[RMDB]
RNA sequence: GGGAACGACUCGAGUAGAGUCGAAAAGAUAUGGAUCCCACCAAGCAACAGCCUGGAGUCGGAAACGACUCCCAGGACAUGCUUGAGUGGGAUCCUAAGUCAAAACACUGGGCUUCGGCCCAGUGAAGAAUAACGUGAAGUUCGCUUCACGUUAUUCAAAAGAAACAACAACAACAAC
Reactivity to DMS in 0.01 (KOAc 150mM, MgCl2 10mM, bicine 150mM(pH8.5), 24C), signal-to-noise 5, nucleotides 027 to 126: g010a040u000a300u010g000g000a020u000c000c010c010a000c010c000a010a000g010c000a070a060c230a200g000c010c000u000g000g010a030g000u000c000g010g000a090a110a160c000g020a010c000u000c170c050c040a010g010g010a020c060a220u010g000c010u000u000g010a130g030u000g000g010g000a000u000c000c000u000a000a070g010u000c030a140a130a110a200c000a000c000u000g000g000g030c010u000u010c230g030g010c000c000c000a000g010u010g010a050a090
Reactivity to 2A3 in 0.01 (KOAc 150mM, MgCl2 10mM, bicine 150mM(pH8.5), 24C), signal-to-noise 2, nucleotides 027 to 126: g030a010u050a020u090g000g000a000u000c010c000c000a000c000c000a000a010g000c010a010a160c060a170g050c010c010u000g010g010a010g010u000c010g030g030a030a050a050c010g010a000c010u040c050c000c040a000g000g020a010c020a140u280g010c000u010u010g030a050g070u000g000g030g000a000u000c000c000u000a000a010g000u000c000a020a000a110a070c010a000c000u010g000g000g010c010u090u150c300g130g000c000c000c000a000g000u010g000a010a020
Chemical mapping of a 177-nucleotide RNA with DMS and 2A3. 2A3 adducts were read by reverse transcription with SuperScript II with manganese. For DMS, 5,940 sequencing reads were counted. For DMS the reverse transcriptase was MarathonRT. The RNA was probed in 150 mM KOAc, 10 mM MgCl2 and 150 mM bicine (pH 8.5) at 24 C. High DMS reactivity at an A or C suggests that its Watson-Crick edge is free. As a SHAPE reagent, 2A3 marks flexible, mostly unpaired nucleotides at the ribose 2'-OH.